[RMDB]
RNA sequence: GGGAACGACUCGAGUAGAGUCGAAAACGCCGCCUUAAAUAAGUCAAGUGAAAACUGUCACGAAAUCACAACAGACACCCACCAGGCGUGCUUCAAACUUAUUCAGUCCGCGUGCCAGAUCCCUUACAUCGGCGGGCUCGUGGGCACGCUGAACCUGCGAUUUAAGAAGUUUCGACUUCUUAAAUCGAAAAGAAACAACAACAACAAC
Reactivity to 2A3 in 0.01 (KOAc 150mM, MgCl2 10mM, bicine 150mM(pH8.5), 24C), signal-to-noise 5, nucleotides 027 to 156: c020g000c010c000g050c010c000u200u200a110a160a090u150a200a050g020u020c070a130a000g010u010g050a030a060a080a090c090u150g120u200c090a050c150g090a120a120a060u100c040a020c010a130a130c030a090g040a040c010a070c030c000c020a060c070c070a010g000g000c010g030u060g010c000u120u150c050a050a160a150c040u080u070a040u260u160c000a000g040u010c010c010g000c000g000u010g000c020c000a030g020a060u030c020c000c000u060u090a110c080a230u160c060g160g020c000g030g020g010c020u000c020g300u120g010g000g000c000a000c010g000c000u000g010a020a020c010c010u040g020
Reactivity to DMS in 0.01 (KOAc 150mM, MgCl2 10mM, bicine 150mM(pH8.5), 24C), signal-to-noise 2, nucleotides 027 to 156: c070g040c040c020g050c000c000u000u020a100a070a070u020a020a130g000u000c050a120a140g010u000g000a060a050a090a220c050u000g000u020c060a210c100g010a100a120a160u000c070a160c060a050a090c050a080g030a300c050a070c020c020c010a090c090c070a060g000g000c000g030u020g030c040u000u000c030a140a050a030c070u010u020a070u020u000c070a060g000u010c030c040g000c010g040u000g020c130c020a130g010a140u000c020c020c000u000u000a120c100a090u000c030g010g010c150g020g010g000c030u000c010g030u000g020g010g000c000a000c020g000c000u000g000a010a060c050c040u000g010